[RMDB]
RNA sequence: GGGAACGACUCGAGUAGAGUCGAAAAGCGCCGCCCGCGUUGAAUGGGUCAUAGAUCAGUUUGAAGUCUGGGCUUGCAUCGUUCAACUCGGCGAACUUCGAGCCGACGUGAGCACCGACGCCGAUGGGCGGAUCAAUUAGUUCGCUAAUUGAUCCGCAAAAGAAACAACAACAACAAC
Reactivity to 2A3 in 0.01 (KOAc 150mM, MgCl2 10mM, bicine 150mM(pH8.5), 24C), signal-to-noise 1, nucleotides 027 to 126: g010c060g040c000c000g020c000c000c000g000c040g010u020u050g040a040a020u050g080g030g000u070c020a050u160a090g080a070u000c030a010g080u060u160u210g180a130a020g080u020c020u040g020g040g010c020u020u040g020c010a070u060c040g040u020u060c010a030a030c000u030c000g020g000c010g040a060a040c030u110u070c030g050a040g000c000c010g040a070c050g030u040g030a040g020c030a040c020c050g040a000c000g020c020c000g040a060u070g000g170
Reactivity to DMS in 0.01 (KOAc 150mM, MgCl2 10mM, bicine 150mM(pH8.5), 24C), signal-to-noise 3, nucleotides 027 to 126: g000c070g040c060c030g000c070c020c030g000c110g010u010u000g010a060a060u000g010g010g010u000c040a040u000a030g000a040u010c020a040g010u000u000u000g020a160a220g010u000c010u010g000g000g000c030u000u010g000c090a050u010c050g010u010u000c040a050a040c030u000c080g000g000c060g000a160a090c100u010u000c020g010a140g000c030c050g010a110c130g010u000g010a110g010c040a080c040c020g000a150c150g010c020c040g000a080u010g010g010